This 177-nucleotide RNA was probed chemically with DMS and 2A3. It was measured as part of the RMDB libraries RFM100 and RFMREP.
RNA sequence: GGGAACGACUCGAGUAGAGUCGAAAAGUGAGACAGGUUAGUUUUACCCUACUGAUGGCGUGUCAUUGUAAUAGUAAUUGAACUUAGUACGAGAGGAACCGUUCAUUCACGUAAUUGGUAUUUACAUUAUCCUUCUUAAAUUCGUUUAAGAAGGAUAAAAAGAAACAACAACAACAAC
Reactivity to DMS in 0.01 (KOAc 150mM, MgCl2 10mM, bicine 150mM(pH8.5), 24C), signal-to-noise 9, nucleotides 027 to 126: g010u000g010a050g010a040c050a120g020g010u010u010a070g010u000u000u010u000a100c020c020c020u000a030c020u000g000a030u000g000g020c020g010u010g010u010c160a080u010u010g010u010a090a100u020a110g010u010a050a060u000u010g010a020a020c010u000u000a070g010u000a150c010g000a250g000a190g000g000a090a090c170c270g000u000u000c010a020u000u000c020a020c020g010u010a060a030u000u000g000g010u000a040u010u010u010a050c160a130u000
Reactivity to 2A3 in 0.01 (KOAc 150mM, MgCl2 10mM, bicine 150mM(pH8.5), 24C), signal-to-noise 9, nucleotides 027 to 126: g080u070g020a040g010a030c030a050g060g200u120u140a030g060u020u100u030u130a110c010c000c000u010a010c000u020g020a030u020g050g010c020g010u020g030u060c070a080u070u180g080u140a110a150u060a220g140u070a050a100u050u050g000a000a000c000u000u000a000g000u000a010c000g000a010g010a030g090g000a010a010c010c000g000u000u000c010a000u020u030c020a000c030g010u020a040a020u010u020g020g000u040a100u060u140u050a070c060a050u020

Background:
The reactions ran in a buffer of 150 mM KOAc, 10 mM MgCl2 and 150 mM bicine (pH 8.5), at 24 C. 2A3 adducts were read by reverse transcription with SuperScript II with manganese.